RNA sequence: GGGAACGACUCGAGUAGAGUCGAAAACACCUCAUGUCCACAAUAGUCGUGGCCGAGUGGGUAAAAGCAGGGAAACCAAACCCCAUGACCAAAGAGUUCAUGGACCUCGAGGAGAAAACGGGCAUCAACUUCAAGAUAGAGCGCGAGCUGAAAAACCAUUCUACAAUUCGUUCGCGAAUUGUAGAAUAAAAGAAACAACAACAACAAC
Reactivity to DMS in 0.01 (KOAc 150mM, MgCl2 10mM, bicine 150mM(pH8.5), 24C), signal-to-noise 1, nucleotides 027 to 156: c050a110c000c040u010c010a180u040g020u000c010c020a040c020a070a140u000a120g000u000c040g020u000g040g000c050c050g020a110g050u020g010g040g040u010a030a040a040a010g070c080a150g000g030g010a150a150a120c020c010a020a300a120c070c020c010c000a050u000g010a020c060c020a030a100a130g010a070g000u010u000c050a140u000g010g000a010c000c090u000c050g000a040g000g000a170g010a160a010a030a090c100g000g010g010c000a060u020c000a100a120c110u000u000c040a050a100g020a060u020a040g000a050g020c030g030c100g000a140g020c050u010g010a050a060a090a000a060c110c060